RNA sequence: GGGAACGACUCGAGUAGAGUCGAAAAUUAUUGAGGCAAAUACACACAGGAUUCUGAUUUGAGACUUAGGUUAUUACAAUUGUGUCUCCUGAUGGCCCAAACAACCAACCAGCAAGCAGCACAAUAGGCUAGCUUUAAUUUUCGAAUUAAAGCUAGCAAAAGAAACAACAACAACAAC
Reactivity to DMS in 0.01 (KOAc 150mM, MgCl2 10mM, bicine 150mM(pH8.5), 24C), signal-to-noise 3, nucleotides 027 to 126: u040u040a060u010u000g020a080g010g010c080a050a050a080u000a110c110a110c100a100c060a050g000g000a050u000u000c030u010g000a080u000u000u010g010a160g000a040c040u000u000a050g020g010u000u000a250u010u000a100c130a020a050u000u010g000u000g020u000c030u000c000c080u010g010a090u000g000g010c020c020c030a040a080a070c110a060a060c050c040a040a080c100c050a030g000c070a030a040g010c060a040g020c020a050c110a050a060u000a080g000
Reactivity to 2A3 in 0.01 (KOAc 150mM, MgCl2 10mM, bicine 150mM(pH8.5), 24C), signal-to-noise 2, nucleotides 027 to 126: u080u040a080u090u100g020a080g050g000c030a060a080a140u170a110c050a010c000a000c010a050g040g010a020u000u040c000u020g090a070u040u090u200g040a010g000a010c020u030u110a080g110g070u070u050a090u120u090a130c060a050a040u000u070g060u020g000u110c000u050c000c000u060g090a130u090g090g010c000c000c000a050a030a000c020a000a020c040c010a000a040c020c010a010g000c020a060a000g000c010a000g020c030a020c000a120a060u060a120g120